Chemical mapping of a 177-nucleotide RNA with 2A3.
Source: RMDB library OK1LIB, as collected in RNAgym.
Values cover nucleotides 27 to 126.
Reactivities are rounded to 0.1 and cut off at 0 and 3.
The RNA was probed in 150 mM KOAc, 10 mM MgCl2 and 150 mM bicine (pH 8.5) at 24 C.
[RMDB]
RNA sequence: GGGAACGACUCGAGUAGAGUCGAAAACAAUACGCUUCUAAAAUAAAACCAGCAAGAAUAUAUCUGUAUAAGGAAAACAAAUAAUCUGCUAUCCAGAUGGCUGGUUGUUCCUCUCUGUACAGGAAUAGCAGGUAUGAUACUUCGGUAUCAUACCUGCAAAAGAAACAACAACAACAAC
Reactivity to 2A3 in 0.01 (KOAc 150mM, MgCl2 10mM, bicine 150mM(pH8.5), 24C), signal-to-noise 1, nucleotides 027 to 126: c000a090a200u090a000c040g000c020u140u000c010u190a040a110a060a240u140a050a120a000a000c040c000a000g000c010a090a000g040a300a040u150a000u030a000u100c040u000g030u050a080u000a010a010g020g010a000a110a050a000c140a020a150a030u260a140a050u050c000u080g170c040u000a030u000c000c060a000g110a080u050g000g000c000u000g010g020u000u070g000u040u070c000c000u000c000u040c060u030g010u090a000c010a100g000g020a000a010u090a090